[RMDB]
RNA sequence: GGGAACGACUCGAGUAGAGUCGAAAAAAUAAAUUGGCAAGAGAGUUGUAUAGAUUUGUAUGGGAUGUAUUUGCCAACCAUUAUAUAGAGCUAACCAAGAAAAGGGCCAAAAAUAAUGACGAUAGCGAUGUAGAUUAAUGUUCGCAUUAAUCUACAUAAAAGAAACAACAACAACAAC
Reactivity to DMS in 0.01 (KOAc 150mM, MgCl2 10mM, bicine 150mM(pH8.5), 24C), signal-to-noise 5, nucleotides 027 to 126: a070a070u000a040a030a110u000u000g000g010c010a050a070g020a180g010a150g010u000u000g000u010a050u000a050g000a120u010u000u010g010u010a080u010g020g000g010a050u000g010u010a100u010u000u000g000c030c020a040a080c120c040a050u000u010a060u010a070u010a070g010a070g010c050u000a050a130c060c040a060a100g010a070a040a070a100g000g000g010c020c030a000a030a030a060a060u010a050a040u000g000a080c110g000a100u000a040g030c140g010
Reactivity to 2A3 in 0.01 (KOAc 150mM, MgCl2 10mM, bicine 150mM(pH8.5), 24C), signal-to-noise 2, nucleotides 027 to 126: a000a000u110a030a080a050u070u100g010g000c010a010a020g110a000g000a020g100u070u100g130u150a040u030a040g160a170u030u130u090g070u050a120u020g030g000g040a010u030g030u140a140u070u030u010g000c000c010a000a000c020c010a030u090u050a050u010a010u020a070g030a000g030c000u030a100a060c050c040a110a000g100a060a110a010a010g010g000g030c020c000a040a060a030a000a060u110a010a070u080g050a000c040g080a080u090a030g100c110g060